[RMDB]
Structure probing data (2A3 and DMS) for a 177-nucleotide construct. The RNA was probed in 150 mM KOAc, 10 mM MgCl2 and 150 mM bicine (pH 8.5) at 24 C. Values are in units of 0.01, from 0 to 300, in steps of 10. The data come from the RNA Mapping Database (RMDB), libraries RFM100 and RFMREP.
RNA sequence: GGGAACGACUCGAGUAGAGUCGAAAAUGGUUAUUGCCCCACUUUUUGUGGGUCUAGUAAUCUUACUAGUUGACCAUUGGUUAGAUGAUUAGCAGAUAACCAUGCAAGUUGUCCUAGCCCACACGUCUCACUCCCUGAUGUUCGCAUCAGGGAGUGAAAAAGAAACAACAACAACAAC
Reactivity to 2A3 in 0.01 (KOAc 150mM, MgCl2 10mM, bicine 150mM(pH8.5), 24C), signal-to-noise 3, nucleotides 027 to 126: u030g030g000u020u000a030u050u060g020c000c000c030c000a010c020u170u290u020u120u220g000u000g000g000g000u000c000u000a000g010u010a020a030u040c010u020u020a030c010u010a020g090u020u080g050a030c000c010a020u050u060g020g000u040u030a000g010a030u030g020a050u080u070a070g090c040a010g030a070u010a030a000c020c000a000u030g020c070a190a070g040u040u020g030u090c010c000u070a050g010c010c030c000a050c000a020c060g090u000c010
Reactivity to DMS in 0.01 (KOAc 150mM, MgCl2 10mM, bicine 150mM(pH8.5), 24C), signal-to-noise 2, nucleotides 027 to 126: u000g010g000u010u000a020u010u000g010c280c000c010c010a020c040u000u020u000u010u020g010u020g000g000g010u030c010u010a010g020u000a040a060u020c130u000u000a110c030u000a000g010u010u000g010a030c060c020a130u020u000g010g000u000u010a040g000a100u000g020a140u000u000a090g000c080a070g000a060u000a010a010c050c020a030u010g020c040a060a050g010u000u000g020u000c050c010u010a060g000c020c010c040a070c180a130c190g000u010c100